[RMDB]
RNA sequence: GGGAACGACUCGAGUAGAGUCGAAAACGGGGCUAUUCGUAGCCCCGAAAAAAGAUAUGGAUGAGUUCAAUAUGGAGAACGCGAUCGGAAACGAUCGCAGUUCGUUGAAAUAUUGAGACUCAUCCUAAGUCAAAAAACCCACCGUUCGCGGUGGGAAUACUAUCUUGACAUUCGUGUCAAGAUAGUAAAAAGAAACAACAACAACAAC
Reactivity to DMS in 0.01 (KOAc 150mM, MgCl2 10mM, bicine 150mM(pH8.5), 24C), signal-to-noise 1, nucleotides 027 to 156: c020g040g020g060g070c020u000a050u000u000c220g060u000a040g010c000c010c010c010g000a000a010a050a120a040a070g000a050u010a260u000g000g010a010u000g020a020g010u000u000c000a070a010u000a020u000g000g000a190g020a020a000c000g020c020g000a020u000c010g060g000a130a100a280c010g040a020u000c000g020c010a000g060u010u000c010g000u000u010g000a300a120a020u000a030u000u000g020a100g000a080c000u000c010a010u010c000c000u000a000a070g000u020c040a000a110a070a120a130a210c010c000c000a000c000c000g030u000u000c300g020c030g070g110u000g000g060g000a010a000
Reactivity to 2A3 in 0.01 (KOAc 150mM, MgCl2 10mM, bicine 150mM(pH8.5), 24C), signal-to-noise 2, nucleotides 027 to 156: c010g010g000g000g000c010u020a020u110u150c220g080u050a020g000c000c000c000c020g000a000a000a000a000a000a000g030a010u060a030u080g010g000a000u000g010a000g010u000u020c000a000a000u000a010u030g050g010a050g000a030a000c000g010c030g000a000u000c000g020g000a030a020a000c000g000a000u000c000g010c000a030g000u010u000c000g020u090u030g000a000a010a000u000a000u000u020g010a040g050a030c000u000c000a000u000c000c000u000a000a000g010u030c040a020a000a010a080a110a120c040c000c040a000c020c000g030u070u070c300g000c010g170g010u010g000g010g000a000a000

About this RNA
Chemical mapping of a 207-nucleotide RNA with DMS and 2A3. For DMS the reverse transcriptase was MarathonRT. The RNA was probed in 150 mM KOAc, 10 mM MgCl2 and 150 mM bicine (pH 8.5) at 24 C. Values cover nucleotides 27 to 156. 2A3 adducts were read by reverse transcription with SuperScript II with manganese.